This 177-nucleotide RNA was probed chemically with DMS and 2A3. The RNA was probed in 150 mM KOAc, 10 mM MgCl2 and 150 mM bicine (pH 8.5) at 24 C. For DMS, 4,578 sequencing reads were counted. The data come from the RNA Mapping Database (RMDB), library OK2TRN. DMS adducts were read by reverse transcription with MarathonRT.
RNA sequence: GGGAACGACUCGAGUAGAGUCGAAAAUGCACGUGUGGUGAGGCACCUGGUUCACUGUGUAGCCUGUAGGAGUGUGAGGAGUGAGGUCGGGAUGUACCUCGUGUCCUUGGGGCAUCCUGUCCUAGCACGCCACAAAUCUAUUCGUAGAUUUGUGGCGAAAAGAAACAACAACAACAAC
Reactivity to DMS in 0.01 (KOAc 150mM, MgCl2 10mM, bicine 150mM(pH8.5), 24C), signal-to-noise 3, nucleotides 027 to 126: u010g010c040a050c080g010u000g030u000g000g000u000g010a100g010g010c040a080c050c040u010g010g020u020u010c070a080c070u000g030u010g000u010a080g000c020c030u000g010u010a080g010g000a070g000u000g020u000g000a080g010g000a120g010u000g010a040g010g020u000c010g000g000g000a050u010g020u010a110c010c000u000c120g030u000g010u010c080c070u000u010g020g000g010g000c020a030u010c020c020u000g000u000c010c010u000a150g000c090a170
Reactivity to 2A3 in 0.01 (KOAc 150mM, MgCl2 10mM, bicine 150mM(pH8.5), 24C), signal-to-noise 1, nucleotides 027 to 126: u060g030c030a030c060g060u080g030u090g040g120u040g050a080g030g000c020a020c020c010u020g110g000u080u070c060a040c100u040g010u000g030u090a060g040c020c000u010g060u040a060g000g080a020g010u100g010u080g040a030g000g020a060g060u080g040a010g020g010u050c040g000g010g010a020u050g000u160a300c030c000u040c030g000u070g050u010c000c000u020u060g010g000g030g000c000a010u000c000c020u000g000u000c000c000u000a050g010c030a050